About this RNA: Chemical mapping of a 207-nucleotide RNA with 2A3 and DMS.

RNA sequence: GGGAACGACUCGAGUAGAGUCGAAAAUCGCGCCCGCAGGACCACCCCUCGCCCCCUUUGCGCUGUCGCUUCGGCUACUACCCGGUGGAAACAACUGAAGCUCCCGAGAACCGCUUUUUCUCUAUCUUACUUGCUUCGGGGCGAGGGUGUUUAGCCCCAUACACAUGAUGUUCGCAUCAUGUGUAUGAAAAGAAACAACAACAACAAC
Reactivity to 2A3 in 0.01 (KOAc 150mM, MgCl2 10mM, bicine 150mM(pH8.5), 24C), signal-to-noise 2, nucleotides 027 to 156: u050c010g000c010g030c040c000c000g040c100a030g000g070a060c020c040a030c010c060c020c000u010c000g010c070c000c000c000c000u020u020u080g010c100g010c060u070g070u120c030g020c030u050u060c000g020g000c000u010a040c030u040a070c090c020c040g050g020u030g010g030a140a080a030c030a030a050c030u040g000a040a010g000c040u020c060c040c040g010a030g020a040a040c080c000g090c110u090u080u030u190u000c010u020c000u040a070u050c010u070u060a110c040u080u130g060c000u050u090c020g000g000g010g010c010g030a020g010g010g000u030g000u000u010u040a020g030c010c000c010
Reactivity to DMS in 0.01 (KOAc 150mM, MgCl2 10mM, bicine 150mM(pH8.5), 24C), signal-to-noise 2, nucleotides 027 to 156: u000c030g030c100g000c020c020c040g050c120a080g030g020a060c020c010a070c080c010c010c010u010c000g000c000c000c000c020c040u040u000u010g030c040g060c040u000g020u010c040g030c060u000u010c040g040g000c020u000a130c120u010a150c030c000c040g010g000u010g030g010a230a120a150c100a060a130c040u020g010a060a150g030c000u000c040c030c030g020a150g020a090a110c120c080g030c100u000u000u000u010u010c030u000c050u000a090u010c070u000u000a080c030u000u010g030c060u000u010c060g010g040g040g000c010g020a050g000g000g030u000g000u000u010u010a100g000c000c030c010
Annotation
It was measured as part of the RMDB library VIROID. For 2A3 the reverse transcriptase was SuperScript II with manganese.